Chemical mapping of a 177-nucleotide RNA with 2A3 and DMS. The reactions ran in a buffer of 150 mM KOAc, 10 mM MgCl2 and 150 mM bicine (pH 8.5), at 24 C. For DMS the reverse transcriptase was MarathonRT. It was measured as part of the RMDB library TTRDEL. Reactivities are given for positions 27 through 126.
[RMDB]
RNA sequence: GGGAACGACUCGAGUAGAGUCGAAAAGAUAUGGAGAAGUCUUCGAUAAGGAUUAUGUCGGAAACGACAUGUCCUUUUGACGAAGUCACUCCUAAGUCAAAGCAUCUAAGCUUCGGCUUAGAUGCAACACCUAGAGUAAGUUCGCUUACUCUAGGUGAAAAGAAACAACAACAACAAC
Reactivity to 2A3 in 0.01 (KOAc 150mM, MgCl2 10mM, bicine 150mM(pH8.5), 24C), signal-to-noise 9, nucleotides 027 to 126: g010a020u060a030u130g030g010a020g030a300a080g050u020c000u010u010c030g080a090u050a180a050g010g000a010u160u170a010u300g010u010c010g010g000a050a070a070c000g010a000c000a000u000g000u000c010c010u010u020u020u060g080a040c010g010a000a000g000u010c010a020c030u010c000c000u020a140a000g020u020c070a160a050a040g000c000a000u000c000u010a000a010g000c010u050u150c300g050g000c010u010u000a000g000a000u000g000c000a000a000
Reactivity to DMS in 0.01 (KOAc 150mM, MgCl2 10mM, bicine 150mM(pH8.5), 24C), signal-to-noise 8, nucleotides 027 to 126: g010a030u000a300u010g000g010a020g000a130a140g020u000c000u000u000c000g010a170u010a010a020g000g000a010u000u010a000u000g010u010c010g020g000a100a070a180c010g010a010c000a000u000g000u000c000c000u000u000u010u010g010a210c140g000a010a010g010u010c040a200c010u000c000c000u000a030a120g010u000c030a090a110a150g000c000a000u000c000u000a000a010g000c000u000u010c250g020g010c000u000u000a000g000a010u000g010c010a030a060